[RMDB]
RNA sequence: GGGAACGACUCGAGUAGAGUCGAAAAUUCUGAGACCACUGACGCCUGACCACUUAAGAUGAAGAUCACCAUUCUUCGGGUUGUAUUUUUGGACUCACUUAAAUUCAACUCUUAUUAUCAGAUGCACCACCACGCAAUAAUUCGUUAUUGCGUGGUGAAAAGAAACAACAACAACAAC
Reactivity to DMS in 0.01 (KOAc 150mM, MgCl2 10mM, bicine 150mM(pH8.5), 24C), signal-to-noise 2, nucleotides 027 to 126: u010u010c030u010g030a140g010a140c050c040a080c040u030g010a070c140g010c020c030u010g020a070c050c040a070c090u000u000a060a100g010a100u000g010a050a030g000a050u010c110a240c150c070a080u000u000c040u000u000c040g010g020g000u000u000g010u000a000u000u000u000u000u010g000g010a110c200u000c150a050c030u000u010a010a010a040u000u010c010a010a020c010u000c000u010u010a090u010u010a080u010c120a050g010a120u000g010c100a050c120
Reactivity to 2A3 in 0.01 (KOAc 150mM, MgCl2 10mM, bicine 150mM(pH8.5), 24C), signal-to-noise 2, nucleotides 027 to 126: u000u010c010u030g050a040g060a100c030c000a040c090u050g060a020c040g010c020c000u050g070a080c040c030a090c070u100u090a080a040g040a060u110g040a030a020g020a010u040c050a030c080c000a040u060u050c030u060u020c000g060g000g000u000u030g020u010a040u050u080u000u020u040g070g040a150c020u010c170a140c030u030u040a010a030a060u060u030c020a030a000c000u000c010u140u120a130u120u080a080u140c030a050g060a180u160g030c000a020c020